[RMDB]
RNA sequence: GGGAACGACUCGAGUAGAGUCGAAAAACGCUACCUUUCGAGGUAGCGUCACCAACUUCGCGCAACCGUCGAGUCGUUCCCAUGGUUGCGUGAAGUAGUUUGAGUGGCAGACGUUCGCGUCUGCCAACACUGGAUGUGCAUUCGUGCACAUCCAGUGAAAAGAAACAACAACAACAAC
Reactivity to DMS in 0.01 (KOAc 150mM, MgCl2 10mM, bicine 150mM(pH8.5), 24C), signal-to-noise 1, nucleotides 027 to 126: a030c010g000c000u000a000c000c000u000u000u030c200g000a010g010g000u000a000g000c000g000u000c050a200c020c020a170a060c010u000u000c010g010c000g010c010a010a010c010c010g000u010c170g020a020g000u000c000g000u000u000c000c000c000a040u000g020g010u000u000g000c010g020u010g020a010a020g020u000a030g020u010u010u010g000a140g030u000g010g020c000a020g000a020c000g000u000u030c160g020c010g030u010c000u000g000c000c000a000a060
Background
This 177-nucleotide RNA was probed chemically with DMS. The RNA was probed in 150 mM KOAc, 10 mM MgCl2 and 150 mM bicine (pH 8.5) at 24 C.